[RMDB]
RNA sequence: GGGAACGACUCGAGUAGAGUCGAAAAAUUGCAGACUUAACCCCAACGGAUGCACUAGCUCACUGCCUCUGGUCGGCUGCUGGUUAAGACUUCACCGGAGAAUCCCGCCAUCUGGGAUAAUGGAUGGUCCCCGCCUUCAGGGUUAAGAUAGGCUAAACCUAUGGUAUACCUUCGGGUAUACCAUAGGAAAAGAAACAACAACAACAAC
Reactivity to DMS in 0.01 (KOAc 150mM, MgCl2 10mM, bicine 150mM(pH8.5), 24C), signal-to-noise 1, nucleotides 027 to 156: a140u000u000g010c030a080g000a220c030u010u000a040a110c040c000c040c030a140a140c120g000g000a090u010g040c070a070c060u000a070g000c020u000c050a070c070u000g000c020c040u020c080u000g010g000u010c070g030g010c030u000g000c080u020g020g030u000u000a100a070g000a060c050u020u000c030a110c010c000g010g020a140g000a110a140u000c000c020c020g000c010c050a070u010c030u000g000g040g040a110u000a040a080u030g040g000a050u000g000g000u000c000c010c010c040g020c050c030u000u000c070a060g010g020g040u000u000a000a040g010a100u000a050g010g030c000u000a080a100a200
Reactivity to 2A3 in 0.01 (KOAc 150mM, MgCl2 10mM, bicine 150mM(pH8.5), 24C), signal-to-noise 4, nucleotides 027 to 156: a010u150u120g010c000a020g020a120c010u050u030a040a040c020c000c020c020a030a040c040g040g000a030u050g040c050a010c060u070a020g030c000u020c070a060c060u060g020c020c010u070c060u110g090g040u120c030g030g020c030u040g010c020u030g070g000u040u100a060a030g040a080c030u060u040c120a030c050c040g050g000a050g060a050a120u060c010c010c020g050c060c010a050u030c050u090g010g040g050a050u120a130a060u200g050g010a000u020g000g000u000c010c000c010c050g020c000c010u020u070c010a010g000g000g000u010u050a010a010g020a050u120a020g010g010c010u040a050a060a020
Conditions: 150 mM KOAc, 10 mM MgCl2 and 150 mM bicine (pH 8.5), 24 C. The record gives the reactivity of an RNA of 207 nucleotides to DMS and 2A3. DMS (dimethyl sulfate) methylates the pairing face of unpaired adenines and cytosines. For 2A3 the reverse transcriptase was SuperScript II with manganese. Source: RMDB library RSTRND, as collected in RNAgym.